[RMDB]
RNA sequence: GGGAACGACUCGAGUAGAGUCGAAAACGUCGUGAACUAGCGACAAUGCCGUAGAUCGAUCGUUAUCUAACCGAAACAUCGUGACUAGUCGUAGAAUAGAACCAGGAGUGGUCGCUGUCAAACAAAGACGGGAACUCAGAUUCGUCUGAGUUCCCGUAAAAGAAACAACAACAACAAC
Reactivity to 2A3 in 0.01 (KOAc 150mM, MgCl2 10mM, bicine 150mM(pH8.5), 24C), signal-to-noise 2, nucleotides 027 to 126: c000g000u010c000g050u010g090a040a010c000u070a170g000c000g010a000c060a010a010u140g020c000c000g040u070a060g080a060u000c010g000a000u000c070g000u000u000a090u060c000u000a000a020c100c180g000a000a000a000c000a000u090c000g020u040g000a160c030u040a050g170u250c050g080u070a000g080a150a020u100a100g030a050a090c080c040a170g000g000a070g030u130g010g090u000c010g000c030u060g070u020c020a020a150a100c010a080a170a000g060
Reactivity to DMS in 0.01 (KOAc 150mM, MgCl2 10mM, bicine 150mM(pH8.5), 24C), signal-to-noise 1, nucleotides 027 to 126: c090g000u020c020g050u000g040a220a090c050u000a000g000c000g050a030c040a140a070u050g030c030c000g010u000a080g000a010u000c020g000a050u000c190g000u000u000a120u030c030u000a070a110c150c260g000a000a000a000c000a080u000c000g010u000g030a240c020u030a080g020u000c100g000u020a140g030a300a190u000a130g000a080a040c300c000a210g000g000a120g060u000g060g030u010c040g000c030u000g000u020c000a020a030a060c190a060a010a010g000